Record summary:
Conditions: 150 mM KOAc, 10 mM MgCl2 and 150 mM bicine (pH 8.5), 24 C. This 207-nucleotide RNA was probed chemically with 2A3.

[RMDB]
RNA sequence: GGGAACGACUCGAGUAGAGUCGAAAACUUAAUAACCAGCUAGCGUGAUCCUUCCGACUUCGCUCAAGGGUCGGGUCUGGGUCUCAAAUUAUUGAGCUACGGUUAAUGUUGCCACCUGAGGCAUUAACAAGAGACUAGUAGGUUAGCUGCGUUGUGUCAAUCGUGUAUGCUUCGGCAUACACGAUUGAAAAGAAACAACAACAACAAC
Reactivity to 2A3 in 0.01 (KOAc 150mM, MgCl2 10mM, bicine 150mM(pH8.5), 24C), signal-to-noise 1, nucleotides 027 to 156: c000u040u180a020a010u060a280a000c000c000a000g000c020u080a040g060c100g230u110g010a000u110c020c050u010u000c010c010g020a000c000u060u080c110g000c010u040c040a000a060g000g000g000u000c000g010g000g060u150c150u160g000g010g010u000c030u010c030a060a070a040u210u260a110u050u020g030a000g010c000u000a000c000g000g000u000u000a000a000u060g020u010u030g000c000c040a020c000c030u000g030a010g000g020c000a000u050u010a040a000c010a000a000g000a000g030a140c100u120a080g100u020a000g090g000u010u080a020g000c010u040g130c040g020u010u010g030u060g020u000
For 2A3 the reverse transcriptase was SuperScript II with manganese.